[RMDB]
RNA sequence: GGGAACGACUCGAGUAGAGUCGAAAAUUGAUUCAUCUCACAGGAUUACAAUAACAAUUUGUACAUUGUUCACCACAACCAGUACAGUAUACACCUUUAUGUGAAAGUGUAGUUGUGCGUUUACAUUUGUAACAUUCGUUUAGCAUUAACAGUAUAACGUACGUUAAUGUUUCGACAUUAACGUACGAAAAGAAACAACAACAACAAC
Reactivity to DMS in 0.01 (KOAc 150mM, MgCl2 10mM, bicine 150mM(pH8.5), 24C), signal-to-noise 5, nucleotides 027 to 156: u000u010g010a230u000u000c100a110u000c020u010c040a070c070a070g000g020a170u000u000a060c070a080a120u000a070a080c050a020a080u000u000u000g020u000a060c050a070u010u010g020u000u000c100a050c040c030a060c020a020a040c040c070a120g010u000a090c030a120g030u010a270u000a130c010a020c020c040u000u000u000a100u040g020u000g000a040a050a060g020u000g020u010a050g020u000u000g030u000g010c110g040u000u000u000a060c050a070u000u000u000g020u010a050a060c070a100u000u000c080g030u000u010u000a140g000c030a090u000u000a070a080c070a110g020u010a080u000a080a210
Reactivity to 2A3 in 0.01 (KOAc 150mM, MgCl2 10mM, bicine 150mM(pH8.5), 24C), signal-to-noise 8, nucleotides 027 to 156: u040u040g060a040u100u030c050a060u010c060u040c040a100c060a080g110g050a070u090u090a070c030a070a070u150a110a040c030a030a120u100u080u140g040u020a010c010a060u030u030g010u010u030c040a020c050c000a020c010a020a020c020c030a060g080u050a070c030a010g040u070a040u040a120c030a030c010c070u130u170u130a150u260g100u030g070a090a070a040g020u010g000u020a060g010u010u030g020u010g050c110g010u010u010u020a030c030a050u010u070u150g030u020a080a050c020a080u050u090c030g060u070u050u090a030g030c040a060u090u090a090a060c030a080g070u150a090u100a160a020
Chemical mapping of a 207-nucleotide RNA with DMS and 2A3. Reactivities are given for positions 27 through 156. Conditions: 150 mM KOAc, 10 mM MgCl2 and 150 mM bicine (pH 8.5), 24 C. The data come from the RNA Mapping Database (RMDB), library OK3TST. For DMS the reverse transcriptase was MarathonRT. For 2A3, 4,927 sequencing reads were counted.